[RMDB]
RNA sequence: GGGAACGACUCGAGUAGAGUCGAAAACGCAACGUCGUACGUGCUGCUCUUCUUGCCGGUUCAUUUGACAAAGUCUAUGAUAUUGGCAAUCCUAAAGGAAUUCCUAUUGUUGAUGACCCUGUGGUUGAAGGUUUUAGGUUCGCCUAAAACAAAAGAAACAACAACAACAAC
Reactivity to 2A3 in 0.01 (KOAc 150mM, MgCl2 10mM, bicine 150mM(pH8.5), 24C), signal-to-noise 9, nucleotides 027 to 129: c050g020c050a060a040c080g100u120c020g070u090a040c010g010u040g040c020u020g010c010u010c010u120u030c040u010u040g040c010c010g030g010u010u010c020a040u160u080u140g030a030c080a100a230a020g000u000c000u010a020u030g050a020u030a040u290u040g000g000c000a010a050u060c010c020u110a110a060a020g070g000a030a080u060u060c010c010u040a090u060u130g060u020u050g020a130u050g050a080c040c000c000u060g030u060g070g030u020u030g030a060a050g070
Reactivity to DMS in 0.01 (KOAc 150mM, MgCl2 10mM, bicine 150mM(pH8.5), 24C), signal-to-noise 7, nucleotides 027 to 129: c140g000c110a070a050c110g020u040c090g050u000a080c000g030u030g010c030u020g020c010u030c060u030u030c100u000u020g000c030c030g010g010u030u030c050a040u010u010u010g020a000c070a110a100a150g030u000c000u040a010u000g030a000u060a030u040u040g020g030c000a030a050u050c060c030u000a050a050a090g000g000a070a100u000u000c030c040u030a090u000u000g030u060u000g010a120u030g020a150c040c000c070u000g070u040g020g010u020u020g040a050a040g040